[RMDB]
RNA sequence: GGGAACGACUCGAGUAGAGUCGAAAAAAACUUUUGUGACUUGCUGAAACGGGACUAAUCACCUCACCGAGGCUAAGCAAGUAAAAUACGCCUCUCAUAUCCUUACCUGAGGGUGGUAAGGAAAUAACCUGCAACGCUUCCUUCGGGAAGCGUUGAACCAUGUUAUGUGAUUCGUCACAUAACAUGGAAAAGAAACAACAACAACAAC
Reactivity to DMS in 0.01 (KOAc 150mM, MgCl2 10mM, bicine 150mM(pH8.5), 24C), signal-to-noise 1, nucleotides 027 to 156: a010a010a030c030u010u010u010u020g020u010g000a100c060u010u000g040c010u000g000a080a050a050c050g010g000g030a270c090u020a110a080u000c030a300c010c020u000c010a140c080c030g020a100g000g010c070u000a080a070g010c040a000a030g010u000a070a080a020a090u000a080c100g000c020c010u010c020u000c080a110u000a100u010c010c000u000u000a040c010c010u010g020a070g000g020g020u000g020g040u000a010a010g010g000a020a030a070u000a080a060c050c030u020g020c000a010a020c000g010c030u000u010c010c030u000u040c260g050g030g010a000a020g020c000g060u010u000g000a080a120
Reactivity to 2A3 in 0.01 (KOAc 150mM, MgCl2 10mM, bicine 150mM(pH8.5), 24C), signal-to-noise 4, nucleotides 027 to 156: a010a000a000c110u150u110u050u140g090u030g050a030c000u030u010g010c020u050g030a080a100a050c060g010g000g020a020c060u110a080a070u100c060a030c050c010u070c020a070c020c080g010a010g040g010c030u040a020a010g000c010a020a030g030u100a010a020a020a030u120a010c050g010c010c010u010c010u020c030a030u040a040u180c000c000u000u000a000c000c020u050g080a070g010g090g000u010g000g000u020a000a000g000g010a000a030a000u030a000a020c030c060u070g020c000a000a000c000g000c000u020u000c000c000u040u050c110g070g000g000a000a000g000c000g000u000u000g000a000a010